[RMDB]
RNA sequence: GGGAACGACUCGAGUAGAGUCGAAAAGAAAGAAAGUACUGAAAGUAUUGUGGGAAAUAAUGUGUAAAUCAUUGACCGUUCCUGCGCUGGUAAGAAUAAAAUUUCAGUCCAGACACCACCAGUAUAACCAAUCUAGUGACCUUCGGGUCACUAGAAACCUGUAGGUAACGUUCGCGUUACCUACAGGAAAAGAAACAACAACAACAAC
Reactivity to 2A3 in 0.01 (KOAc 150mM, MgCl2 10mM, bicine 150mM(pH8.5), 24C), signal-to-noise 3, nucleotides 027 to 156: g080a020a110a000g100a040a150a010g000u030a000c020u030g030a070a110a020g090u140a160u270u110g020u010g000g000g030a000a020a040u050a020a010u050g020u010g010u060a020a010a040u020c000a010u010u010g000a000c000c020g020u110u110c030c050u080g000c030g000c000u010g000g000u030a010a050g020a050a040u210a160a190a060a020u040u120u030c000a000g000u010c010c000a000g020a010c020a000c020c000a000c000c000a000g000u020a030u040a120a010c050c040a040a030u020c000u000a000g010u010g000a000c000c000u010u020c300g070g010g000u000c010a000c000u010a000g000a000a000a000
Reactivity to DMS in 0.01 (KOAc 150mM, MgCl2 10mM, bicine 150mM(pH8.5), 24C), signal-to-noise 1, nucleotides 027 to 156: g010a200a040a150g000a090a120a160g000u000a120c000u000g000a150a100a160g000u010a040u020u010g060u000g000g000g010a150a000a120u020a020a040u000g000u020g020u020a170a060a300u020c010a010u000u010g000a060c060c010g000u000u000c040c000u000g010c040g000c010u010g000g000u000a060a160g010a180a070u010a100a050a150a300u020u000u000c070a100g010u000c010c040a050g020a190c130a120c070c000a040c070c010a110g010u000a040u000a070a150c050c050a090a250u010c010u000a020g030u010g010a080c000c000u000u070c300g030g020g000u000c000a000c000u010a000g000a020a020a060